[RMDB]
The record gives the reactivity of an RNA of 177 nucleotides to 2A3 and DMS. 2A3 adducts were read by reverse transcription with SuperScript II with manganese.
RNA sequence: GGGAACGACUCGAGUAGAGUCGAAAAAGAUGGAUCAUUACGAUGAUCCAUCACUCUGUUAGUUUUGCAUAGUUGCACUACAAGAAGAAUGUAGUUGUGCAAAUCUAUGCAAAACUGAUGGUGGCAAAUCGUACGUAUAGUUCGCUAUACGUACGAUAAAAGAAACAACAACAACAAC
Reactivity to 2A3 in 0.01 (KOAc 150mM, MgCl2 10mM, bicine 150mM(pH8.5), 24C), signal-to-noise 9, nucleotides 027 to 126: a000g010a000u000g000g000a000u000c010a000u030u090a070c280g100a030u010g000a000u000c000c000a000u000c000a000c000u020c000u000g010u000u010a000g000u000u000u000u000g000c000a000u000a010g010u010u010g000c000a000c010u080a010c060a060a050g260a140a040g100a140a130u200g050u170a090g020u070u080g020u020g020c000a010a030a070u040c000u000a000u000g000c000a000a000a000a000c000u000g000a000u010g000g030u020g040g020c060a100a120
Reactivity to DMS in 0.01 (KOAc 150mM, MgCl2 10mM, bicine 150mM(pH8.5), 24C), signal-to-noise 8, nucleotides 027 to 126: a090g020a010u000g010g000a010u000c000a010u000u010a140c200g020a050u000g000a010u000c000c000a000u000c000a070c030u000c000u010g020u000u000a010g010u000u000u000u000g000c000a000u000a000g010u000u010g000c000a040c000u000a010c010a050a120g010a150a170g020a140a150u010g010u000a050g010u010u020g020u000g000c010a000a020a060u030c010u000a000u000g010c000a000a000a000a000c000u000g000a010u000g000g010u000g000g010c190a090a090